[RMDB]
RNA sequence: GGGAACGACUCGAGUAGAGUCGAAAAAAAAGAUAUGGAGGCAUGGAGUGAUUAACACACGAUGAAAGCGAUCGGAAACGAUCGCUGGAGUGUGUACAUCACGAUGAAAUGCCUCCUAAGUCAAAAACUAUUUAUCUUCGUUCGCGAAGAUAAAUAGAAAAGAAACAACAACAACAAC
Reactivity to DMS in 0.01 (KOAc 150mM, MgCl2 10mM, bicine 150mM(pH8.5), 24C), signal-to-noise 3, nucleotides 027 to 126: a070a070a160a100g000a060u010a300u000g000g000a000g010g010c010a000u010g020g020a070g020u000g000a010u000u000a300a090c000a000c000a000c020g000a120u020g000a110a100a020g000c000g030a010u000c000g000g000a100a070a140c000g020a000u000c000g030c010u000g020g000a050g020u010g000u010g000u000a090c300a060u000c000a010c000g030a100u010g000a120a090a010u000g000c010c010u000c000c000u010a020a060g000u010c020a040a100a120a120a150
Reactivity to 2A3 in 0.01 (KOAc 150mM, MgCl2 10mM, bicine 150mM(pH8.5), 24C), signal-to-noise 1, nucleotides 027 to 126: a000a000a010a060g030a020u060a040u130g000g000a000g020g000c000a000u000g000g000a030g020u020g020a040u080u180a200a020c000a000c000a000c040g300a300u080g000a020a030a000g000c000g030a020u000c010g050g000a050a030a050c010g000a000u010c000g010c010u000g000g000a020g000u020g000u020g000u010a000c000a000u010c010a000c010g020a010u020g000a030a040a000u000g000c000c000u010c000c000u000a000a000g000u030c000a000a030a030a030a070
Source: RMDB library TTRDES, as collected in RNAgym. Structure probing data (DMS and 2A3) for a 177-nucleotide construct. For DMS the reverse transcriptase was MarathonRT. The reactions ran in a buffer of 150 mM KOAc, 10 mM MgCl2 and 150 mM bicine (pH 8.5), at 24 C.